[RMDB]
RNA sequence: GGGAACGACUCGAGUAGAGUCGAAAACGGAUUAGGCGUGGAGGCGAAAGUCACCCUCCUCGCAUCGCAAGUUCGUGCUUGCGACUUACACGUAGGGCGAAGGGUGGGCGAAAGUUGCCAUGAGACCAAAAUAUGUAGUUCUUCGGAACUACAUAAACUGCAUAGGUUUCUUCGGAAACCUAUGCAGAAAAGAAACAACAACAACAAC
Reactivity to 2A3 in 0.01 (KOAc 150mM, MgCl2 10mM, bicine 150mM(pH8.5), 24C), signal-to-noise 2, nucleotides 027 to 156: c030g050g000a030u230u130a140g060g000c020g000u030g000g010a000g020g000c160g030a270a020a060g090u120c040a130c040c000c000u000c000c000u020c000g010c000a000u000c030g000c000a000a000g010u150u210c100g160u300g070c000u020u000g000c010g000a000c020u030u140a020c110a010c060g140u130a040g000g000g040c150g070a030a040g030g090g000u050g000g000g040c000g110a150a030a000g020u050u050g090c000c000a040u140g090a060g010a050c020c140a030a040a000a090u110a030u010g000u000a000g000u000u000c000u010u010c300g050g000a000a000c000u010a000c000a000u000a000a020a000

Record summary
The record gives the reactivity of an RNA of 207 nucleotides to 2A3. For 2A3, 649 sequencing reads were counted. Conditions: 150 mM KOAc, 10 mM MgCl2 and 150 mM bicine (pH 8.5), 24 C. It was measured as part of the RMDB library M2RFPK.